[RMDB]
RNA sequence: GGGAACGACUCGAGUAGAGUCGAAAACCGUUUUGGUCCCUUAACUUUAUUGAAAGUAUCGGUUUGGUCCUUUCUGUUAAUUUAAUUCAAAAAAACGUUAAAUUUUGAUCCCUUAUCUUAUUUAAUUAUUAUCGAUACCUUUCGAGGUAUCGAUAAUAAAAGAAACAACAACAACAAC
Reactivity to 2A3 in 0.01 (KOAc 150mM, MgCl2 10mM, bicine 150mM(pH8.5), 24C), signal-to-noise 2, nucleotides 027 to 126: c000c010g000u030u040u080u040g090g030u050c000c010c000u010u040a030a010c000u020u040u050a070u080u260g040a010a050a020g000u000a010u010c070g090g090u230u220u200g020g000u040c000c000u000u000u050c000u010g010u000u050a010a000u070u000u040a090a060u080u180c070a080a110a050a060a060a050a000c040g010u030u020a050a050a070u160u090u000u020g010a010u060c000c010c000u030u090a180u130c110u160u100a180u160u120u060a250a090u010u010